The record gives the reactivity of an RNA of 177 nucleotides to 2A3 and DMS.
The data come from the RNA Mapping Database (RMDB), library RFMREP.
Reactivities are given for positions 27 through 126.
RNA sequence: GGGAACGACUCGAGUAGAGUCGAAAAUACCCUGUAGAUAGAGCUGUGUGUUUGGAAUAUACCGUACACAAGCUAGACUACAAGGUGAAAAAAUCACUCAUCAUUAAGUUCGCUUAAUGAUGAGUGACAAUUGAAAACUGUUCGCAGUUUUCAAUUGAAAAGAAACAACAACAACAAC
Reactivity to 2A3 in 0.01 (KOAc 150mM, MgCl2 10mM, bicine 150mM(pH8.5), 24C), signal-to-noise 4, nucleotides 027 to 126: u080a000c000c010c010u010g010u000a020g020a200u070a020g080a010g030c020u040g020u010g010u000g040u300u120u210g050g040a120a020u280a020u060a300c000c020g000u020a010c000a000c010a010a010g010c000u020a040g040a020c000u010a000c000a020a020g030g010u060g060a080a080a040a010a000a020u020c000a000c000u000c000a000u000c000a000u000u000a010a000g020u020u080c190g040c090u000u000a000a000u000g000a000u000g000a000g000u000g000a000
Reactivity to DMS in 0.01 (KOAc 150mM, MgCl2 10mM, bicine 150mM(pH8.5), 24C), signal-to-noise 5, nucleotides 027 to 126: u010a050c010c000c030u000g010u000a000g000a150u000a090g010a020g010c000u000g020u000g020u000g000u000u010u010g010g010a220a200u010a160u020a100c010c010g010u000a020c010a000c000a080a030g010c000u000a030g010a160c000u000a010c010a010a030g010g020u000g000a000a030a060a080a090a150u010c000a000c000u000c000a010u000c000a010u000u000a000a010g010u000u000c250g020c000u000u000a000a000u000g000a000u000g000a010g000u000g010a010